[RMDB]
RNA sequence: GGGAACGACUCGAGUAGAGUCGAAAAUAGCAGACGGCUAGCCGUGAUUGUAUCGUCAAUACGGAAUUUCGGUUUCCGGUACAAUCUUAAACAGCGAGACUUGUUUAAGAAAAUAAACAGGUCUUUUAUAGUUUAUAUCAUUCGUGAUAUAAACUAUAAAAGAAACAACAACAACAAC
Reactivity to 2A3 in 0.01 (KOAc 150mM, MgCl2 10mM, bicine 150mM(pH8.5), 24C), signal-to-noise 5, nucleotides 027 to 126: u090a010g030c040a010g080a200c060g110g020c030u030a020g050c000c030g110u080g020a020u020u020g020u030a040u010c010g060u030c030a040a030u220a250c050g020g060a130a150u110u100u220c020g030g000u030u060u020c030c000g000g000u000a020c010a010a000u000c000u050u090a120a180a010c060a030g060c030g090a050g020a050c020u040u030g060u030u020u010a090a050g090a090a090a030a070u080a000a020a020c020a040g050g000u000c000u000u000u000u000
Reactivity to DMS in 0.01 (KOAc 150mM, MgCl2 10mM, bicine 150mM(pH8.5), 24C), signal-to-noise 1, nucleotides 027 to 126: u020a060g000c020a100g000a090c080g000g000c020u010a010g040c060c000g020u000g000a000u020u000g000u000a000u000c020g000u040c100a030a030u050a050c070g020g010a110a120u000u030u090c080g010g000u000u000u000c110c000g020g000u000a020c000a000a040u020c000u010u070a020a040a080c160a000g000c090g020a060g000a030c000u000u000g000u000u000u000a040a100g020a110a060a160a090u000a000a040a010c020a030g030g000u020c000u060u020u000u000
Structure probing data (2A3 and DMS) for a 177-nucleotide construct. Source: RMDB library RFM100, as collected in RNAgym. Reactivities are given for positions 27 through 126. The DMS profile rests on 1,627 reads. Reactivities are rounded to 0.1 and cut off at 0 and 3. For DMS the reverse transcriptase was MarathonRT.